[RMDB]
RNA sequence: GGGAACGACUCGAGUAGAGUCGAAAAGAUAUGGACCCAACAGCAUGAACUACAGCCAUCGGAAACGAUGGCAAUGCAUGACAUGGGUCCUAAGUCAAAUCUUGACUUACUUCGGUAAGUCAAGAAAGUCUUACAGAGAGUUCGCUCUCUGUAAGACAAAAGAAACAACAACAACAAC
Reactivity to DMS in 0.01 (KOAc 150mM, MgCl2 10mM, bicine 150mM(pH8.5), 24C), signal-to-noise 4, nucleotides 027 to 126: g000a040u010a300u000g000g010a020c000c000c000a030a160c290a180g000c020a020u000g000a110a100c120u010a130c220a240g010c010c000a000u000c000g000g000a110a080a180c000g020a010u000g010g020c000a010a010u010g000c000a000u010g010a060c130a230u010g000g010g020u000c000c000u000a010a070g000u000c030a080a100a080u010c000u000u000g000a020c000u000u000a000c000u000u010c180g020g000u000a000a010g000u010c000a000a000g000a020a020a070
Reactivity to 2A3 in 0.01 (KOAc 150mM, MgCl2 10mM, bicine 150mM(pH8.5), 24C), signal-to-noise 3, nucleotides 027 to 126: g040a010u050a030u130g000g000a010c000c000c000a040a050c050a060g120c000a010u030g050a190a090c050u210a130c270a080g040c010c010a000u000c000g040g020a070a020a070c030g000a000u010g000g000c000a010a000u020g000c010a020u010g020a060c050a100u030g020g010g000u000c000c000u000a100a010g010u000c030a040a010a200u030c000u000u010g000a010c000u000u010a000c000u020u030c040g030g000u000a000a000g000u000c000a000a000g000a000a010a000